[RMDB]
RNA sequence: GGGAACGACUCGAGUAGAGUCGAAAAAUGGAAUGUGUAUUCAAAGCGAUCCUUGCAAUGCUCCCCGUGGUCAGAGCUGGCUGAUGCGCCCAGCCAAUCACUGCAAGGCGCGCCCAGGCCGCCUCCAUACCUCUAAUACCUGAACUUUGAUCGUCUACGUACAAUCGAUCUUCGGAUCGAUUGUACGAAAAGAAACAACAACAACAAC
Reactivity to 2A3 in 0.01 (KOAc 150mM, MgCl2 10mM, bicine 150mM(pH8.5), 24C), signal-to-noise 2, nucleotides 027 to 156: a000u070g030g020a040a090u060g050u040g010u120a160u090u170c150a150a010a000g030c000g030a020u010c020c000u000u010g020c010a040a200u210g050c030u080c000c000c000c050g080u030g070g000u060c100a030g000a020g100c020u040g010g000c010u090g050a100u210g080c030g020c050c000c000a000g020c010c000a000a040u030c020a020c030u010g000c000a000a010g000g040c020g000c000g040c020c010c000a000g030g050c030c050g030c040c000u000c020c000a040u080a100c000c000u050c010u080a160a270u060a150c010c010u020g130a120a080c050u110u180u120g050a140u150c010g010u020c080u070a030

Source: RMDB library OK3TST, as collected in RNAgym. Chemical mapping of a 207-nucleotide RNA with 2A3. 2A3 adducts were read by reverse transcription with SuperScript II with manganese. The 2A3 profile rests on 799 reads.